[RMDB]
Conditions: 150 mM KOAc, 10 mM MgCl2 and 150 mM bicine (pH 8.5), 24 C.
Structure probing data (2A3 and DMS) for a 177-nucleotide construct.
It was measured as part of the RMDB library OK2TRN.
For 2A3, 1,050 sequencing reads were counted.
RNA sequence: GGGAACGACUCGAGUAGAGUCGAAAAGCUGCCUCUGACGUCCUUCUCCCCCGGAAACGGGGCCGAAGGGUGGUAAGGCGUGUCGCCUGGCGCUGGCACGGGUAUGCGUGGAGGUCGACCCUGGCCGAGGUGAUCGUAUCUUCGGAUACGAUCACCUAAAAGAAACAACAACAACAAC
Reactivity to 2A3 in 0.01 (KOAc 150mM, MgCl2 10mM, bicine 150mM(pH8.5), 24C), signal-to-noise 1, nucleotides 027 to 126: g020c040u020g030c000c000u100c080u140g130a050c010g050u030c020c010u030u030c030u060c000c020c000c000c010g040g000a030a000a020c000g000g000g000g000c030c030g010a010a010g020g000g000u040g000g060u040a050a070g060g040c000g030u010g020u020c070g020c000c000u000g090g020c080g090c090u160g120g020c030a030c070g040g000g040u080a030u110g040c040g010u070g020g010a060g000g050u040c100g100a230c000c000c000u060g100g000c030c010g010
Reactivity to DMS in 0.01 (KOAc 150mM, MgCl2 10mM, bicine 150mM(pH8.5), 24C), signal-to-noise 1, nucleotides 027 to 126: g000c020u000g010c000c000u000c030u010g040a250c070g010u000c020c000u000u000c000u000c300c000c000c000c000g000g000a030a110a140c010g000g010g000g040c080c100g020a010a020g000g020g020u000g020g010u000a120a080g000g010c020g000u000g010u000c030g030c010c020u000g010g000c130g010c030u000g010g020c020a090c020g010g000g000u000a070u000g020c030g040u000g000g000a060g000g010u010c070g000a030c020c010c010u000g000g020c100c030g010